Chemical mapping of a 177-nucleotide RNA with 2A3 and DMS. The reactions ran in a buffer of 150 mM KOAc, 10 mM MgCl2 and 150 mM bicine (pH 8.5), at 24 C. 2A3 is a SHAPE reagent: it acylates the 2'-hydroxyl of flexible nucleotides of all four kinds. For DMS the reverse transcriptase was MarathonRT.
[RMDB]
RNA sequence: GGGAACGACUCGAGUAGAGUCGAAAAGGAAAUUUGAUUGUAUUGCAUAUACAACUAUGCGAUGCACUUUGUUCAUUUUAACUUUGGAUAUAUGUGCCUUGCUAUGAACGCGUUCAUUUUUAAGUGACUUAAUAUUGAUGUUCGCAUCAAUAUUAAGAAAAGAAACAACAACAACAAC
Reactivity to 2A3 in 0.01 (KOAc 150mM, MgCl2 10mM, bicine 150mM(pH8.5), 24C), signal-to-noise 9, nucleotides 027 to 126: g050g020a070a070a040u120u090u090g090a110u030u050g010u020a020u020u100g050c030a030u060a000u020a230c040a060a040c040u030a030u070g000c000g010a000u010g010c000a010c030u090u090u070g030u020u020c010a030u020u030u040u160a120a100c070u030u040u050g020g010a010u020a000u010a020u150g040u030g010c000c010u010u030g000c010u060a050u140g050a070a020c040g000c030g090u030u020c040a070u040u030u040u100u140a150a070g030u030g090a030
Reactivity to DMS in 0.01 (KOAc 150mM, MgCl2 10mM, bicine 150mM(pH8.5), 24C), signal-to-noise 9, nucleotides 027 to 126: g010g010a080a060a070u000u010u010g000a080u000u010g020u000a010u000u010g000c050a040u000a040u010a110c290a080a100c110u000a040u000g000c000g010a010u000g010c000a030c300u000u000u000g000u000u000c000a010u010u000u000u010a030a230c140u000u000u000g010g000a060u000a050u010a050u010g010u000g010c010c040u000u000g010c030u000a080u000g000a050a050c160g020c140g000u000u000c020a030u010u000u010u010u010a050a120g010u000g000a140